[RMDB]
Structure probing data (2A3 and DMS) for a 207-nucleotide construct. It was measured as part of the RMDB library M2RFOK.

RNA sequence: GGGAACGACUCGAGUAGAGUCGAAAAACAGAAAAAAGGUGUUUAAAUUAGAUUUGCAAACGGACGGUACUAAAUACCGUCACUUUUACGUCUAACUUAUCGUUAACUCUGCAAAAAGAAAACAAGAAAAACAAGCGUGAGUUCGCUCACGCUUGAAGAAAAUCGUUAUGUUCGCAUAACGAUUUUCAAAAGAAACAACAACAACAAC
Reactivity to 2A3 in 0.01 (KOAc 150mM, MgCl2 10mM, bicine 150mM(pH8.5), 24C), signal-to-noise 3, nucleotides 027 to 156: a000c050a020g060a020a110a010a000a040a030g050g020u060g040u050u150u070a070a100a040u040u030a010g010a050u060u060u260g040c060a020a020a040c050g020g000a000c000g010g000u010a040c060u200a110a050a080u060a020c000c000g000u010c000a050c000u000u010u000u040a020c010g000u000c010u010a020a030c020u040u030a020u090c010g050u010u030a040a030c020u010c030u110g030c040a060a070a050a000a040g080a030a090a020a010c050a050a050g120a100a090a030a030a010c000a000a000g000c000g000u010g000a000g030u080u100c140g010c080u000c000a000c000g000c000u000u010g000a000a000
Reactivity to DMS in 0.01 (KOAc 150mM, MgCl2 10mM, bicine 150mM(pH8.5), 24C), signal-to-noise 2, nucleotides 027 to 156: a070c090a090g010a010a010a190a180a160a160g020g010u000g010u010u000u000a010a030a010u000u000a010g000a000u020u010u010g030c010a000a020a060c120g000g010a020c000g030g030u000a020c010u030a090a040a300u000a010c000c000g010u000c000a010c000u000u000u000u030a000c000g000u000c010u010a000a050c010u000u020a010u000c070g010u000u000a070a080c140u000c030u000g000c080a020a130a070a070a210g010a070a010a060a080c070a090a130g010a130a080a080a140a140c000a010a000g000c000g060u010g000a020g040u000u000c300g020c010u020c000a020c020g060c030u000u040g010a040a110